[RMDB]
RNA sequence: GGGAACGACUCGAGUAGAGUCGAAAACCCCCUUCGGGGGGCCAAUAACCUUUGUGCAAAGAGGCGAAGCAAGCAUCGAGCUCCCAUUGGGAGCUAACGAUGUGAUGACCUUCGCUACCCACCUUUGCACUCUGGUGUCGUAUCGAUUCGUCGAUAAUCCAGUGGAAUAAUUCGUUAUUCCACUGGAAAAAGAAACAACAACAACAAC
Reactivity to DMS in 0.01 (KOAc 150mM, MgCl2 10mM, bicine 150mM(pH8.5), 24C), signal-to-noise 1, nucleotides 027 to 156: c010c010c000c000c010u000u010c280g040g090g030g000g050g120c000c030a010a120u020a050a080c010c000u000u000u000g000u000g000c010a000a000a040g000a050g000g020c010g000a030a050g040c010a060a300g010c000a000u000c000g000a110g000c010u000c010c010c020a300u000u000g080g050g000a010g040c000u000a010a090c010g020a040u010g040u000g000a070u010g010a070c300c000u000u000c020g010c000u000a000c000c000c020a300c180c010u000u010u000g010c000a000c020u000c010u000g020g010u000g050u040c060g000u000a030u010c010g010a120u000u010c130g000u000c010g010a040u000a090a300
Reactivity to 2A3 in 0.01 (KOAc 150mM, MgCl2 10mM, bicine 150mM(pH8.5), 24C), signal-to-noise 2, nucleotides 027 to 156: c020c000c000c010c030u000u120c280g080g000g000g000g040g000c010c010a050a090u190a060a000c010c000u000u000u000g000u000g000c020a000a020a000g010a000g030g000c000g000a000a000g020c050a110a020g000c020a020u050c000g000a000g010c000u000c000c060c030a280u200u300g040g000g000a000g050c000u000a050a050c000g000a000u010g010u010g030a050u130g050a070c000c020u000u000c020g000c010u030a030c010c000c000a070c000c000u010u000u000g020c000a000c000u000c000u010g030g000u020g060u190c070g060u060a020u070c010g010a020u100u120c180g040u090c010g120a000u280a060a100